[RMDB]
RNA sequence: GGGAACGACUCGAGUAGAGUCGAAAAUUGCGCUUGCCGGAUCUAGCAUCUUCUUGAUGUUUUCUCCUGCAAUAUCAAAGAGCAAUACAAGAAUCAAUAAUGCUAAACCAGGGAAUAAAGCCAACCAGCCGGUGAUAGUGUUCGCACUAUCACCGGCAAAAGAAACAACAACAACAAC
Reactivity to 2A3 in 0.01 (KOAc 150mM, MgCl2 10mM, bicine 150mM(pH8.5), 24C), signal-to-noise 1, nucleotides 027 to 126: u070u090g000c070g000c110u000u030g110c110c050g000g170a080u150c170u060a000g000c000a010u000c000u000u090c090u000u170g010a000u050g060u170u000u000u000c000u000c000c060u050g020c020a030a030u040a110u200c040a000a280a000g070a010g000c000a020a020u000a020c080a020a050g130a070a000u140c060a000a060u140a100a130u060g030c000u040a000a000a130c010c010a000g000g000g030a030a030u000a140a000a010g050c010c000a000a000c000c000a060

The record gives the reactivity of an RNA of 177 nucleotides to 2A3. The RNA was probed in 150 mM KOAc, 10 mM MgCl2 and 150 mM bicine (pH 8.5) at 24 C. Reactivities are given for positions 27 through 126.